[RMDB]
RNA sequence: GGGAACGACUCGAGUAGAGUCGAAAAUCAAAUCGCUGGGAUCCUCGGGCCAAGACAUGCGAGAUACUGAAGCGCGCACGGUAUUUCGCAACAGCUUGGUCUCUAGCGUGGGAUCCUGUGCUGAAGCGCGCACGGCAACCGAAAGGUGCGAAUAUAACCAGUAUAGUAACUUCGGUUACUAUACUGGAAAAGAAACAACAACAACAAC
Reactivity to DMS in 0.01 (KOAc 150mM, MgCl2 10mM, bicine 150mM(pH8.5), 24C), signal-to-noise 2, nucleotides 027 to 156: u020c100a060a090a150u010c040g020c000u020g020g030g000a020u000c020c000u010c110g000g050g010c000c000a030a020g010a090c040a300u010g040c000g000a010g030a030u010a050c000u000g020a070a110g020c010g020c020g030c060a300c010g000g090u020a000u000u000u010c000g000c000a080a050c070a220g010c010u000u000g020g020u000c000u000c050u000a150g000c130g020u000g010g000g010a040u000c000c020u030g030u010g050c020u000g040a020a120g060c020g000c020g030c030a070c040g000g010c020a200a070c010c020g000a090a190a230g030g000u020g000c020g010a110a110u000a120u080a100a300
Reactivity to 2A3 in 0.01 (KOAc 150mM, MgCl2 10mM, bicine 150mM(pH8.5), 24C), signal-to-noise 3, nucleotides 027 to 156: u140c030a050a030a020u050c020g000c010u020g000g020g000a010u000c010c000u030c040g010g000g000c000c010a020a010g050a240c050a060u030g000c010g010a010g000a010u000a000c000u010g000a100a030g000c010g000c000g000c010a040c020g010g000u000a000u000u020u000c020g000c010a030a020c030a040g140c000u000u010g010g020u000c010u000c000u020a020g100c020g060u300g010g000g000a000u000c000c000u010g010u040g000c080u240g010a020a000g000c000g010c000g000c000a000c000g080g000c030a110a120c020c010g040a120a030a020g000g000u030g000c030g080a150a040u230a030u080a190a090
Chemical mapping of a 207-nucleotide RNA with DMS and 2A3.
For DMS, 2,822 sequencing reads were counted.
The data come from the RNA Mapping Database (RMDB), library RNAMAK.
For 2A3, 4,231 sequencing reads were counted.